This 177-nucleotide RNA was probed chemically with DMS and 2A3.
RNA sequence: GGGAACGACUCGAGUAGAGUCGAAAAUGCCACCCCUGUAAGAAUACUUUUAGUACAGGCGAGUACACACAGUAUACUGCCACCCCUGUAAGAAUACUUUUAGUACAAGCGAGUACACACAGUAUACGUACUCCAAUGCAUUCGUGCAUUGGAGUACAAAAGAAACAACAACAACAAC
Reactivity to DMS in 0.01 (KOAc 150mM, MgCl2 10mM, bicine 150mM(pH8.5), 24C), signal-to-noise 2, nucleotides 027 to 126: u010g020c000c030a160c040c000c010c020u100g000u030a090a060g000a080a070u000a080c010u000u060u000u070a060g020u000a080c030a070g110g050c040g000a240g040u000a010c000a040c120a040c300a090g020u000a030u000a090c040u000g000c000c030a200c050c000c000c000u030g000u110a090a130g030a110a030u010a030c030u000u000u010u040a250g020u000a020c010a080a160g010c120g000a170g000u000a000c040a100c010a020c300a060g010u020a060u030a070c240
Reactivity to 2A3 in 0.01 (KOAc 150mM, MgCl2 10mM, bicine 150mM(pH8.5), 24C), signal-to-noise 4, nucleotides 027 to 126: u090g040c010c000a040c010c010c020c030u060g040u070a040a040g040a160a030u080a080c050u000u080u100u290a080g030u030a020c030a040g080g060c030g020a050g040u050a030c070a000c030a000c000a050g020u020a010u020a060c010u040g010c000c000a020c020c000c000c000u020g040u060a030a060g040a100a040u050a030c000u050u130u050u220a040g020u020a010c020a030a030g010c060g100a000g050u030a000c050a000c000a000c000a020g050u030a050u050a070c080